[RMDB]
RNA sequence: GGGAACGACUCGAGUAGAGUCGAAAAGAUAUGGAGGAGGCAGACAUGAUGUCUCGGAAACGAGCAUCAACAGCUGCUCCUCCUAAGUCAAAACCUACUGUCAUUGGUUCGCCAAUGACAGUAGGAACACCAUCAAUGUGUUCGCACAUUGAUGGUGAAAAGAAACAACAACAACAAC
Reactivity to 2A3 in 0.01 (KOAc 150mM, MgCl2 10mM, bicine 150mM(pH8.5), 24C), signal-to-noise 4, nucleotides 027 to 126: g030a030u030a020u110g010g020a010g020g000a040g140g290c010a010g020a180c040a100u090g000a000u000g190u130c010u000c040g010g020a050a070a010c020g000a000g000c000a000u010c010a020a040c080a070g030c000u000g000c000u010c000c000u000c000c000u010a030a000g050u000c020a030a040a090a160c000c000u000a000c000u000g000u010c000a000u000u010g000g050u030u070c260g060c140c000a000a010u000g010a000c000a000g000u000a000g000g000a000a000
Reactivity to DMS in 0.01 (KOAc 150mM, MgCl2 10mM, bicine 150mM(pH8.5), 24C), signal-to-noise 4, nucleotides 027 to 126: g010a030u010a280u020g010g010a010g000g020a110g020g010c010a010g010a050c090a230u000g010a020u000g000u010c010u000c010g010g010a080a080a200c020g010a020g010c000a000u000c000a030a080c230a100g000c010u000g010c010u000c000c000u000c000c000u000a000a040g010u000c010a070a050a130a180c010c010u000a000c000u000g000u000c000a000u000u000g000g000u000u010c230g000c000c000a000a000u000g010a000c000a010g000u000a000g000g000a050a110